[RMDB]
RNA sequence: GGGAACGACUCGAGUAGAGUCGAAAAGAUAUGGAAUAAAAGUCUUCGAUAAGCUGAUGGUCGGAAACGACCACAGCUUUUGACGAAGUCGCUAUUCCUAAGUCAAACUAUCCGUUCGCGGAUAGAAGAUCUAUAGUUAGUUCGCUAACUAUAGAUCAAAAGAAACAACAACAACAAC
Reactivity to DMS in 0.01 (KOAc 150mM, MgCl2 10mM, bicine 150mM(pH8.5), 24C), signal-to-noise 7, nucleotides 027 to 126: g000a040u000a300u020g000g010a020a000u000a000a080a200a220g010u000c010u000u000c000g020a170u000a020a020g020c000u000g000a100u010g010g010u010c000g020g000a100a090a190c010g010a010c000c000a020c000a010g000c000u000u000u000u000g010a190c140g020a010a010g010u000c050g010c250u000a020u000u000c000c000u000a070a160g000u000c030a110a110a300c000u000a000u000c000c000g010u000u020c290g020c010g010g000a000u000a010g010a100a120
Reactivity to 2A3 in 0.01 (KOAc 150mM, MgCl2 10mM, bicine 150mM(pH8.5), 24C), signal-to-noise 5, nucleotides 027 to 126: g020a010u080a020u170g000g010a030a000u030a050a260a040a090g020u020c000u010u000c020g090a110u030a210a000g000c000u030g020a300u030g300g000u000c010g020g000a040a090a090c010g010a010c010c000a000c000a010g010c000u010u010u010u040g060a040c000g000a000a000g000u020c020g000c080u010a000u020u000c000c000u000a120a010g070u030c050a050a060a130c020u000a000u000c020c000g020u060u050c300g010c030g100g010a000u000a000g010a030a050